[RMDB]
RNA sequence: GGGAACGACUCGAGUAGAGUCGAAAACUUGUAGUUUUGCUGUAUGAUGUUGCGGUUCAGUUUCCUUACUUAUUUGCCGUCCGUAUUUAUAUAUAAAUUCUGCUCUCCGGGCGGUCCUUUUAGCCGCCUAGUGACCUACUUUCGAGUAGGUCACUAGAAAAGAAACAACAACAACAAC
Reactivity to 2A3 in 0.01 (KOAc 150mM, MgCl2 10mM, bicine 150mM(pH8.5), 24C), signal-to-noise 7, nucleotides 027 to 126: c040u070u180g150u230a110g020u030u010u010u020g000c010u010g040u150a140u120g160a080u140g090u150u090g010c020g000g040u030u080c010a000g010u010u010u020c020c000u020u030a100c040u110u230a120u170u120u170g010c000c000g000u000c000c000g050u050a060u040u220u000a150u010a040u010a010u080a130a090a120u220u030c040u080g040c040u030c020u020c080c010g000g020g000c000g000g010u060c010c000u080u150u010u060a030g010c010c000g030c010
Reactivity to DMS in 0.01 (KOAc 150mM, MgCl2 10mM, bicine 150mM(pH8.5), 24C), signal-to-noise 3, nucleotides 027 to 126: c030u000u010g000u040a080g010u000u000u010u000g000c020u000g010u010a080u020g020a110u020g010u020u000g000c050g000g010u010u010c050a060g010u000u000u000c020c000u000u030a110c170u020u030a080u020u020u040g000c000c010g020u010c010c010g000u020a060u000u000u010a060u050a110u040a120u040a050a030a080u030u020c040u000g010c050u000c020u000c080c010g010g020g000c010g010g000u000c110c050u020u040u030u020a100g010c000c000g000c040
Source information:
Structure probing data (2A3 and DMS) for a 177-nucleotide construct. Values cover nucleotides 27 to 126. DMS adducts were read by reverse transcription with MarathonRT.